[RMDB]
RNA sequence: GGGAACGACUCGAGUAGAGUCGAAAAGUUUUGUAUUGCAGGGCUCGAUCAGUGGGCGUUGGCUCAGGUCGAUUGCUCUAAUGGUUUGGUCUGUGACCUGGUUGCUCGCUGAGAGUAGAACCAUUGGCUAAAUAAUAUUAUUCGUAAUAUUAUUUAGAAAAGAAACAACAACAACAAC
Reactivity to DMS in 0.01 (KOAc 150mM, MgCl2 10mM, bicine 150mM(pH8.5), 24C), signal-to-noise 4, nucleotides 027 to 126: g010u000u010u000u010g010u000a070u020u020g010c110a050g010g010g010c020u000c010g000a060u000c000a080g030u000g020g000g010c010g010u040u030g010g010c010u000c020a030g000g000u010c000g010a050u020u020g020c030u000c040u020a040a040u020g000g000u000u010u000g000g010u000c030u000g010u030g000a030c010c010u010g020g020u020u010g000c010u000c010g010c150u030g000a130g000a070g010u010a050g010a040a020c000c000a050u000u010g000g000
Reactivity to 2A3 in 0.01 (KOAc 150mM, MgCl2 10mM, bicine 150mM(pH8.5), 24C), signal-to-noise 2, nucleotides 027 to 126: g000u010u000u010u010g030u020a080u000u080g010c030a000g000g020g000c000u000c020g030a040u010c000a020g090u030g010g000g000c020g020u110u120g110g000c000u000c040a000g000g000u000c000g020a020u000u110g000c000u030c000u010a030a060u040g020g010u020u030u030g000g000u010c030u010g080u060g020a020c000c000u020g010g070u130u140g030c000u000c000g040c050u090g050a020g000a000g010u040a030g020a040a020c000c000a010u030u080g050g000